[RMDB]
RNA sequence: GGGAACGACUCGAGUAGAGUCGAAAAGAAUCACCGUACCUAUUUAGGUUUACGCUCCAAGAUCGGUGGAUAGCAGCCCUAUCAAUAUCUAGGAGAACUGUGCUAUGUUUAGAACAUUAGGUAGUCUAUUACACAGCCAUGUUCGCAUGGCUGUGAAGUAACAAUCUUACUUCGGUAAGAUUGUUACAAAAGAAACAACAACAACAAC
Reactivity to 2A3 in 0.01 (KOAc 150mM, MgCl2 10mM, bicine 150mM(pH8.5), 24C), signal-to-noise 7, nucleotides 027 to 156: g050a030a060u120c010a000c020c000g020u030a020c000c010u100a180u220u240u290a050g000g010u020u070u030a020c030g000c010u010c010c010a020a010g000a040u040c030g030g030u040g050g040a030u060a040g100c090a020g020c000c010c000u040a050u100c040a080a050u040a010u160c010u020a010g000g020a010g020a030a030c050u060g030u080g100c010u040a020u070g060u050u100u080a120g050a090a030c020a080u130u110a040g040g000u020a020g040u010c030u070a170u090u140a070c000a000c000a000g000c000c000a000u000g020u020u020c060g000c080a000u000g000g000c000u000g000u000g000a000a000
Reactivity to DMS in 0.01 (KOAc 150mM, MgCl2 10mM, bicine 150mM(pH8.5), 24C), signal-to-noise 3, nucleotides 027 to 156: g000a120a070u000c010a150c000c010g010u010a080c020c010u000a190u000u000u020a030g010g020u000u000u000a050c040g000c010u020c010c010a090a120g000a050u000c050g020g040u000g030g020a060u010a080g020c030a190g010c110c080c000u000a080u010c010a090a100u010a070u000c050u000a140g000g020a080g020a080a060c080u010g020u000g000c040u000a080u000g010u010u000u010a100g000a060a060c070a110u000u000a060g020g010u000a110g020u000c030u010a090u000u000a220c010a010c000a000g010c000c000a010u000g020u000u020c300g020c010a010u000g010g000c000u010g010u000g000a010a080